[RMDB]
RNA sequence: GGGAACGACUCGAGUAGAGUCGAAAAAUUACCACGCGGCGCGCCGCGCGGUUAUCAGUCAAUUAUCGGGUGUCCACCGCGCUGGGCGCCCCCGGCUUGGUCCCCCACCAAGCCGCUCUCCAAUCAAACUCCAUAAAAUAUUCGUAUUUUAUGGAGUAAAAGAAACAACAACAACAAC
Reactivity to 2A3 in 0.01 (KOAc 150mM, MgCl2 10mM, bicine 150mM(pH8.5), 24C), signal-to-noise 8, nucleotides 027 to 126: a000u110u090a070c020c020a050c040g040c060g000g010c040g000c030g060c130c020g000c010g000c010g010g000u040u040a080u090c050a030g300u040c060a090a200u160u160a140u300c090g010g000g010u030g000u030c020c020a010c010c050g100c020g010c090u060g010g020g000c000g010c000c000c000c000c010g000g000c000u000u010g000g020u130c030c000c000c000c000a010c000c000a000a000g000c000c010g000c000u030c000u010c010c020a090a140u120c040a140a170
Reactivity to DMS in 0.01 (KOAc 150mM, MgCl2 10mM, bicine 150mM(pH8.5), 24C), signal-to-noise 3, nucleotides 027 to 126: a090u030u020a100c010c010a090c100g010c110g000g030c050g000c180g000c000c170g020c010g040c040g000g000u010u020a060u000c090a110g020u020c100a070a080u040u010a090u020c200g030g010g000u010g040u000c110c090a030c010c080g000c060g010c070u010g000g000g000c010g020c010c010c000c140c040g020g000c000u010u010g000g000u010c130c040c000c030c010a300c010c010a000a020g010c010c000g020c070u000c000u010c000c030a110a140u050c110a150a190